An RNA of 207 nucleotides, treated with 2A3 and DMS and read out base by base. For DMS, 2,941 sequencing reads were counted. 2A3 adducts were read by reverse transcription with SuperScript II with manganese. Conditions: 150 mM KOAc, 10 mM MgCl2 and 150 mM bicine (pH 8.5), 24 C.

RNA sequence: GGGAACGACUCGAGUAGAGUCGAAAACCAUGUUCGCAUGGAUUCCGGCGUACUACUAGCUAUGAAGUGGUUUUGUUUCGAUAAGUUCUCCCAAAUAGGAGAACUUUUGACGAAAUUUCCAUGGAGCUAGUAUCGCAUAAGGUCUGUUCGCAGACAAGGAGAAGGAGUAGUUCGCUACUCCUUCUCCAAAAGAAACAACAACAACAAC
Reactivity to 2A3 in 0.01 (KOAc 150mM, MgCl2 10mM, bicine 150mM(pH8.5), 24C), signal-to-noise 2, nucleotides 027 to 156: c010c000a000u000g010u040u170c270g040c090a020u000g000g040a070u110u000c010c000g030g010c000g040u040a060c030u000a000c030u020a020g000c010u030a120u300g050a060a030g000u000g040g020u060u050u120u150g050u020u010u030c000g010a060u010a090a000g020u000u000c010u230c020c010c030a230a300a120u200a250g000g000a020g010a010a000c000u000u000u020u050g100a070c000g000a000a000a000u080u080u010c000c000a040u050g000g030a010g010c000u000a000g050u030a120u290c000g000c010a020u060a140a040g170g000u000c000u000g040u060u110c160g010c080a020g000a000c020a040a090
Reactivity to DMS in 0.01 (KOAc 150mM, MgCl2 10mM, bicine 150mM(pH8.5), 24C), signal-to-noise 2, nucleotides 027 to 156: c000c010a120u000g000u000u000c110g070c030a100u010g000g000a110u000u000c020c000g000g020c000g030u000a080c160u000a030c000u000a010g030c010u000a230u000g000a300a240g020u010g010g020u000u000u000u000g010u000u000u000c030g000a180u000a000a010g010u010u000c000u000c010c010c010a030a160a300u010a050g000g010a050g010a000a000c000u000u000u000u010g060a300c110g020a020a060a030u000u000u000c000c000a070u010g010g000a030g000c000u000a010g010u000a000u000c040g000c000a040u000a060a080g030g000u000c010u020g020u000u000c200g000c050a080g010a060c020a170a300